Source information
Source: RMDB library OK3TST, as collected in RNAgym. Chemical mapping of a 207-nucleotide RNA with DMS and 2A3. For DMS the reverse transcriptase was MarathonRT. In probing experiments dimethyl sulfate is read out at A N1 and C N3, which are open when not base-paired. The reactions ran in a buffer of 150 mM KOAc, 10 mM MgCl2 and 150 mM bicine (pH 8.5), at 24 C.
[RMDB]
RNA sequence: GGGAACGACUCGAGUAGAGUCGAAAAUAAUUCCGGCACUGACCGGCCUGAAAGCCUACGUGACCAAGCACCUCAAGAACCUUUGGGAGGAGGCCGGGAAGGGCACGGACUCAAAGGUCGAUCAGGCAGCGAAAUUCGUGGAAUUGCUGGCUCAGCGAGCGAUUCCACUAUUCGUAGUGGAAUCGCUAAAAGAAACAACAACAACAAC
Reactivity to DMS in 0.01 (KOAc 150mM, MgCl2 10mM, bicine 150mM(pH8.5), 24C), signal-to-noise 1, nucleotides 027 to 156: u000a080a150u010u010c010c010g000g000c010a080c000u010g000a110c020c020g060g060c000c000u000g000a300a050a130g000c010c000u000a050c050g020u000g040a120c070c010a150a190g000c030a130c010c000u000c030a050a110g020a170a140c050c010u000u000u000g030g010g000a160g000g000a030g010g030c010c080g000g010g010a120a150g060g000g000c010a060c000g060g010a080c030u000c010a000a230a080g000g000u000c010g000a080u010c040a080g050g000c010a110g000c040g010a020a060a110u000u000c030g030u000g030g040a110a080u000u030g010c000u000g040g010c070u000c040a090g040c150g000
Reactivity to 2A3 in 0.01 (KOAc 150mM, MgCl2 10mM, bicine 150mM(pH8.5), 24C), signal-to-noise 3, nucleotides 027 to 156: u090a000a010u080u030c010c000g020g020c030a040c100u010g010a020c040c020g020g030c010c020u140g040a090a050a000g030c040c020u100a110c080g060u080g050a090c000c000a050a010g040c000a020c020c020u070c030a040a070g080a250a160c040c050u150u140u150g090g040g000a040g030g050a030g040g000c100c050g110g010g000a050a060g020g020g010c050a040c090g000g000a010c030u020c060a060a090a010g050g000u020c010g010a070u030c010a010g080g020c010a010g030c000g040a010a040a100u170u120c080g040u130g030g020a020a100u060u080g000c020u040g110g000c030u010c080a030g060c040g070